[RMDB]
The record gives the reactivity of an RNA of 177 nucleotides to DMS. The RNA was probed in 150 mM KOAc, 10 mM MgCl2 and 150 mM bicine (pH 8.5) at 24 C.
RNA sequence: GGGAACGACUCGAGUAGAGUCGAAAAUGUAACCUUUAAAGUUAAAGGAAGAAAAGUGGAAGCAGAAGUGAUAGCUUCUCCUUAUGAGUAUAUUUUGCUGUCGCCAACAGAUGUUCCUUGGUUAACAUAAUCAAAGGGGUUUCGACCCCUUUGAUUAAAAAGAAACAACAACAACAAC
Reactivity to DMS in 0.01 (KOAc 150mM, MgCl2 10mM, bicine 150mM(pH8.5), 24C), signal-to-noise 3, nucleotides 027 to 126: u000g010u000a090a150c010c010u000u010u000a050a190a210g010u000u000a020a020a030g010g000a130a110g010a100a060a090a080g000u000g010g020a050a020g010c040a040g020a070a170g010u010g020a110u010a140g000c040u000u000c020u000c120c040u000u000a060u000g000a150g010u010a060u010a050u010u000u000u010g000c010u000g000u000c080g000c130c130a030a060c090a040g010a100u010g020u000u000c010c010u000u010g020g000u010u010a040a070c090a090